RNA sequence: GGGAACGACUCGAGUAGAGUCGAAAAUUCCUUGCAGUCAACGAUGCCAACGUAGUGGUGAUUUUGGUCAUUGCUAGAGCGAAAGCUAGUGUAUGGGCUCCGGGGAUAGUACGGACGCAAGUUUGAAUCGUUAACUUUGUUUCGACAAAGUUAACGAAAAAGAAACAACAACAACAAC
Reactivity to 2A3 in 0.01 (KOAc 150mM, MgCl2 10mM, bicine 150mM(pH8.5), 24C), signal-to-noise 6, nucleotides 027 to 126: u060u020c000c000u000u050g020c040a020g030u050c020a060a020c060g030a040u220g020c000c000a060a040c090g040u030a030g020u030g040g040u040g020a040u050u040u070u250g160g010u030c010a020u020u050g000c010u020a040g000a030g140c060g030a090a030a010g020c000u020a030g010u020g020u110a120u110g060g050g020c010u000c020c020g060g000g000g020a020u020a070g060u080a060c040g020g010a030c070g000c050a030a030g010u050u080u090g080a100a060
Reactivity to DMS in 0.01 (KOAc 150mM, MgCl2 10mM, bicine 150mM(pH8.5), 24C), signal-to-noise 6, nucleotides 027 to 126: u000u000c000c000u010u020g020c070a100g010u000c040a070a050c090g010a090u010g020c000c020a100a140c080g020u010a040g020u010g010g010u000g020a050u010u010u020u050g030g000u010c020a020u000u000g010c010u000a030g010a100g030c030g000a090a090a210g010c010u000a080g010u000g000u000a050u010g000g000g010c020u000c050c040g000g000g000g010a070u010a110g010u010a060c080g010g000a060c090g010c080a030a080g000u000u000u010g000a090a150